[RMDB]
RNA sequence: GGGAACGACUCGAGUAGAGUCGAAAAAGCGAUGAUACGUCAUCGCAACGAUUGCCUGAUCGUCAAACAGGAGACGGCCGUGGCCGCGACCACGUAAAAAAGCGUAACGUGGUCUACGGACCACGAAAAAAGCGCGGAACGUUCGCGUUCCGCGCAAGUCUUGCUUUAUGUUCGCAUAAAGCAAGACAAAAGAAACAACAACAACAAC
Reactivity to 2A3 in 0.01 (KOAc 150mM, MgCl2 10mM, bicine 150mM(pH8.5), 24C), signal-to-noise 2, nucleotides 027 to 156: a010g000c000g020a010u000g020a000u020a050c200g050u020c010a000u000c000g000c000a000a000c020g050a030u000u140g040c000c020u030g020a120u000c000g120u050c140a100a150a100c040a160g110g030a080g040a030c100g050g060c070c010g020u000g010g000c030c000g000c000g010a010c000c000a000c030g010u030a050a050a000a000a000a000g030c020g020u010a060a000c010g000u000g000g000u000c000u020a050c170g050g000a050c000c030a000c010g020a030a000a000a010a000a000g010c000g060c010g000g030a010a000c010g050u100u120c170g020c020g090u000u010c020c020g000c000g010c000a000a000